Structure probing data (2A3) for a 207-nucleotide construct. The reactions ran in a buffer of 150 mM KOAc, 10 mM MgCl2 and 150 mM bicine (pH 8.5), at 24 C. It was measured as part of the RMDB library OK3TST.
RNA sequence: GGGAACGACUCGAGUAGAGUCGAAAAUAAGGGUCUUCACGGACAAGAGAUCCGUCUGCGCAAGCGUAACGGCGGGAGAAGCUUUCUUCCUGGACGUAGGGACCAGCCAUACGCUCGCUUCCGCCACCAACGAAGUAGAGAUCCUGGUGAUGCGGUGGAGCUAACCCUGCUUCGGCAGGGUUAGCUCAAAAGAAACAACAACAACAAC
Reactivity to 2A3 in 0.01 (KOAc 150mM, MgCl2 10mM, bicine 150mM(pH8.5), 24C), signal-to-noise 1, nucleotides 027 to 156: u140a000a010g020g000g000u000c000u030u010c060a030c020g070g000a000c110a080a000g110a000g000a230u000c030c000g070u020c020u030g050c060g000c030a070a060g060c000g050u030a030a070c140g000g020c050g000g000g010a030g020a040a020g000c000u020u100u080c050u200u150c040c010u040g030g030a030c100g120u120a080g020g090g030a060c030c030a030g010c020c010a060u080a060c070g020c040u080c040g080c000u000u000c020c020g040c050c000a000c000c000a010a160c070g000a100a000g000u090a000g010a000g000a090u000c000c000u000g000g010u010g000a030u080g090c050g040g000u000g000
Values cover nucleotides 27 to 156.